[RMDB]
RNA sequence: GGGAACGACUCGAGUAGAGUCGAAAAGCAAAGAAAUUUUAUCCCAAUAAGGCGAAGCGUGCAAGUCGAAUAAAGCUAAUGCUGCUAGCGAGGACGCGAGCCCUAGCAGACUCCUAGCGAGAAAAAAACUUAUUGAGAGGUUCGCCUCUCAAUAAGUAAAAGAAACAACAACAACAAC
Reactivity to 2A3 in 0.01 (KOAc 150mM, MgCl2 10mM, bicine 150mM(pH8.5), 24C), signal-to-noise 2, nucleotides 027 to 126: g030c040a060a070a030g100a120a200a100u090u150u070u110a070u100c030c010c030a020a050u230a080a040g030g010c030g060a010a010g030c000g010u080g030c040a000a130g050u060c020g050a070a020u100a120a080a000g000c030u030a080a040u200g060c070u030g000c010u000a000g000c030g090a070g000g000a010c030g030c030g080a050g030c030c000c000u000a010g000c030a000g060a150c000u000c000c010u000a040g010c040g030a080g110a110a060a000a000a000a000
Reactivity to DMS in 0.01 (KOAc 150mM, MgCl2 10mM, bicine 150mM(pH8.5), 24C), signal-to-noise 2, nucleotides 027 to 126: g000c140a040a040a070g000a030a120a140u010u020u000u000a120u000c000c000c000a140a170u010a120a100g010g000c020g010a120a150g000c040g010u000g000c030a050a080g010u000c070g010a090a120u000a050a080a110g000c060u000a030a090u010g010c080u000g000c000u000a020g010c150g000a070g000g000a160c120g000c050g000a160g010c020c010c000u010a110g000c010a040g000a300c020u000c010c050u000a000g020c040g020a150g010a010a000a070a130a140a040
Chemical mapping of a 177-nucleotide RNA with 2A3 and DMS.
For DMS, 1,258 sequencing reads were counted.
Values cover nucleotides 27 to 126.
DMS adducts were read by reverse transcription with MarathonRT.